[RMDB]
Chemical mapping of a 207-nucleotide RNA with 2A3. The RNA was probed in 150 mM KOAc, 10 mM MgCl2 and 150 mM bicine (pH 8.5) at 24 C. Reactivities are given for positions 27 through 156. It was measured as part of the RMDB library ARCHII.

RNA sequence: GGGAACGACUCGAGUAGAGUCGAAAAAGCAUACCGGGGCGGAUGAGGACCUCGUUAAAAACGUCCACUUUGUAAUUGGCAACGAUUACGCACUUGCAGCUUAAUUAAGCAGCACGAUCAACCUUGUGGUGGUUCCGCACUUGGAUUGAUCGUCAUUGACGAUAUCUACGUUCGCGUAGAUAUCGUCAAAAGAAACAACAACAACAAC
Reactivity to 2A3 in 0.01 (KOAc 150mM, MgCl2 10mM, bicine 150mM(pH8.5), 24C), signal-to-noise 2, nucleotides 027 to 156: a000g060c060a040u060a100c020c030g000g000g000g000c000g000g000a000u010g040a020g070g130a000c000c000u040c000g080u010u060a030a000a000a000a000c010g000u000c050c010a020c150u140u160u180g040u020a000a000u020u070g040g070c080a030a020c030g010a020u000u020a030c020g000c040a040c080u070u190g000c000a020g000c030u070u070a180a090u090u150a300a000g020c050a010g000c050a000c000g000a010u010c000a000a000c000c000u000u010g000u000g040g020u050g030g040u210u060c040c000g080c000a000c020u010u040g020g000a210u020u000g000a010u000c020g000u000c000a050u000u000